[RMDB]
RNA sequence: GGGAACGACUCGAGUAGAGUCGAAAAGAUAUGGACGUGCAAGGGAGAAGAUUCGGAAACGAACUUCGAGGAUCUUGAUACGUCCUAAGUCAAAAUCAUAAUGUACCCUUCGGGGUACAUUAUGAAACCACUUAUUAAUCUUCGGAUUAAUAAGUGGAAAAGAAACAACAACAACAAC
Reactivity to DMS in 0.01 (KOAc 150mM, MgCl2 10mM, bicine 150mM(pH8.5), 24C), signal-to-noise 4, nucleotides 027 to 126: g000a060u010a300u000g010g000a000c010g020u000g010c000a010a010g000g000g000a030g000a030a000g000a210u000u000c010g020g010a090a100a170c010g010a010a010c000u000u000c010g000a080g010g000a020u000c000u010u000g000a060u000a000c000g010u000c000c000u010a010a070g000u000c030a070a070a120a150u000c000a000u000a010a010u000g000u000a000c020c000c000u000u000c210g030g020g000g000u000a000c000a000u000u000a010u000g000a000a110a180
Reactivity to 2A3 in 0.01 (KOAc 150mM, MgCl2 10mM, bicine 150mM(pH8.5), 24C), signal-to-noise 4, nucleotides 027 to 126: g040a010u060a040u170g010g000a000c000g000u020g010c020a020a010g010g020g020a030g020a030a020g100a300u000u030c000g010g030a080a070a040c010g010a010a010c010u000u010c000g050a150g010g020a010u010c010u040u040g040a130u120a140c010g000u000c000c010u000a080a010g040u020c030a030a010a000a300u020c000a000u000a000a000u000g000u000a010c020c000c000u000u080c300g040g000g000g000u000a000c000a000u000u000a010u000g000a000a000a000